[RMDB]
RNA sequence: GGGAACGACUCGAGUAGAGUCGAAAAAAUGAUGGAGGGGUGGCAUCCCUCAGUGAAUGGAAAAGCAAUUAUCAAUGUUUGAGUCUCGAAGGAACUUAGACAGAGAUGGUUUGGUCCUGGGACAGUAAUUUACAUAUCUCUUCGGAGAUAUGUAAAUAAAAGAAACAACAACAACAAC
Reactivity to 2A3 in 0.01 (KOAc 150mM, MgCl2 10mM, bicine 150mM(pH8.5), 24C), signal-to-noise 3, nucleotides 027 to 126: a000a000u180g040a040u100g050g040a010g000g000g000g000u020g020g000c010a070u080c010c000c000u020c000a000g030u010g060a050a100u080g000g080a000a080a000a030g070c040a000a020u060u030a020u080c010a020a040u010g020u010u000u030g010a000g010u010c030u020c230g070a110a070g130g010a030a020c000u030u010a020g010a030c020a010g020a000g010a020u030g000g030u020u040u070g040g020u000c000c000u020g010g030g030a000c010a010g050u080a030
Reactivity to DMS in 0.01 (KOAc 150mM, MgCl2 10mM, bicine 150mM(pH8.5), 24C), signal-to-noise 9, nucleotides 027 to 126: a090a040u010g000a110u020g010g010a040g010g000g000g010u010g010g010c130a190u010c010c010c010u010c020a050g010u010g000a140a050u000g010g010a050a080a080a100g010c090a040a030u000u000a030u000c010a030a190u000g000u000u000u000g000a010g000u000c150u000c030g010a150a100g010g000a040a020c010u000u000a010g010a010c010a010g000a300g000a010u000g000g010u000u000u010g010g010u000c020c010u000g000g000g010a050c090a110g010u010a050